The record gives the reactivity of an RNA of 207 nucleotides to DMS and 2A3. For DMS the reverse transcriptase was MarathonRT. The 2A3 profile rests on 4,840 reads.

RNA sequence: GGGAACGACUCGAGUAGAGUCGAAAACGAAGAGAAUGUUUCAAAGGUACUUGUAAUGGUUCAUUAAAGUCAGCGGUAGGCAUGUGGAUAUUCAUCUUGGCUUCUUUAUCAUCAUGUGUUAUAAAUGAUUUAUGUUUACUCAGCAUCUAAUAAAACACCUCAUAAUUCAAUUCGUUGAAUUAUGAGGAAAAGAAACAACAACAACAAC
Reactivity to DMS in 0.01 (KOAc 150mM, MgCl2 10mM, bicine 150mM(pH8.5), 24C), signal-to-noise 3, nucleotides 027 to 156: c080g010a110a090g010a160g020a090a080u000g010u000u010u000c040a070a110a150g020g010u000a040c040u010u020g020u000a060a090u000g020g010u010u000c030a080u010u000a080a090a140g020u010c030a090g020c050g030g020u000a060g020g020c020a040u000g030u000g000g020a120u000a070u010u010c040a080u010c040u000u000g000g020c060u000u000c030u010u000u000a080u020c050a050u010c030a050u010g020u000g020u000u020a090u000a030a040a060u010g000a150u000u000u000a040u010g020u000u010u010a070c060u000c090a200g020c020a030u000c020u010a050a080u000a020a030a100a100c070a110
Reactivity to 2A3 in 0.01 (KOAc 150mM, MgCl2 10mM, bicine 150mM(pH8.5), 24C), signal-to-noise 7, nucleotides 027 to 156: c030g020a060a030g060a010g030a110a100u090g010u020u060u050c080a110a070a020g030g000u040a060c020u070u050g030u100a070a050u090g040g030u040u070c050a040u060u150a100a040a030g040u030c020a010g020c030g070g000u030a020g040g020c020a010u050g020u020g040g010a010u010a070u120u100c040a070u040c030u030u030g070g000c020u070u020c000u060u150u100a080u060c030a020u010c020a030u070g040u010g070u150u120a130u060a100a120a070u060g040a030u040u060u100a040u070g020u000u040u010a080c070u050c030a010g010c020a030u030c040u120a080a060u120a110a180a020a020c030a020